Chemical mapping of a 207-nucleotide RNA with 2A3. The RNA was probed in 150 mM KOAc, 10 mM MgCl2 and 150 mM bicine (pH 8.5) at 24 C. It was measured as part of the RMDB library OK3TST.
RNA sequence: GGGAACGACUCGAGUAGAGUCGAAAACGAUCUGUUCGCAGAUCGAGCUACGGAGACGUAGCAAAGCGAGCGAGGGCACGGGCGCUCGCACUACCGGAACUCAAACCAUAUCCACGUGUGCUAGGAUAUGGCCGUGCCCAUAGCAACAGCACACGAACACUGGGAGGUAUUUCGAUACCUCCCAGUGAAAAGAAACAACAACAACAAC
Reactivity to 2A3 in 0.01 (KOAc 150mM, MgCl2 10mM, bicine 150mM(pH8.5), 24C), signal-to-noise 2, nucleotides 027 to 156: c010g010a000u010c000u020g010u140u110c260g010c050a000g010a010u000c000g000a020g010c000u010a000c000g000g060a050g020a060c020g010u000a000g000c030a050a080a000g000c010g000a000g010c000g000a040g000g010g000c020a000c000g030g010g000c020g000c000u000c020g030c020a000c010u130a080c010c010g130g100a110a100c060u070c180a070a090a090c020c020a050u030a030u050c030c030a080c200g000u020g000u000g000c000u000a040g030g110a020u000a000u000g010g000c020c000g000u000g030c020c000c000a070u130a010g070c030a020a100c030a090g010c010a000c000a000c000g020a110a020